[RMDB]
This 177-nucleotide RNA was probed chemically with DMS and 2A3. DMS adducts were read by reverse transcription with MarathonRT.
RNA sequence: GGGAACGACUCGAGUAGAGUCGAAAAACCCACGUAGUUCCUUGCAGUCAACGAUGCCAACGUAGUGGUGAUUUUGGUCAUUGCUAGAGCGAAAGCUAGUGUAUGGGCUCCGGGGAUAGUACGGACGAUUUGAAGGACACUUCGGUGUCCUUCAAAUAAAAGAAACAACAACAACAAC
Reactivity to DMS in 0.01 (KOAc 150mM, MgCl2 10mM, bicine 150mM(pH8.5), 24C), signal-to-noise 4, nucleotides 027 to 126: a060c000c000c000a140c090g010u020a030g030u020u000c000c000u000u010g000c220a080g010u000c010a110a060c040g010a110u040g000c030c010a080a260c050g020u000a030g000u010g020g030u000g010a030u000u000u050u050g020g010u000c000a020u010u000g000c030u010a050g000a120g030c040g020a100a180a180g000c010u010a090g020u010g020u010a060u020g020g000g010c000u000c110c030g000g000g000g000a060u080a040g000u000a030c040g000g000a070c230g000
Reactivity to 2A3 in 0.01 (KOAc 150mM, MgCl2 10mM, bicine 150mM(pH8.5), 24C), signal-to-noise 6, nucleotides 027 to 126: a040c010c000c000a010c010g020u020a010g090u030u030c000c000u000u030g030c040a010g020u040c020a030a030c040g070a050u120g000c000c000a030a050c070g060u060a050g030u020g050g020u010g050a050u050u120u140u280g300g000u010c010a010u000u040g000c000u030a020g010a050g210c040g050a100a020a000g010c010u030a040g020u030g040u120a170u120g070g000g000c010u000c010c010g000g000g000g010a020u040a090g080u010a030c010g010g080a020c070g080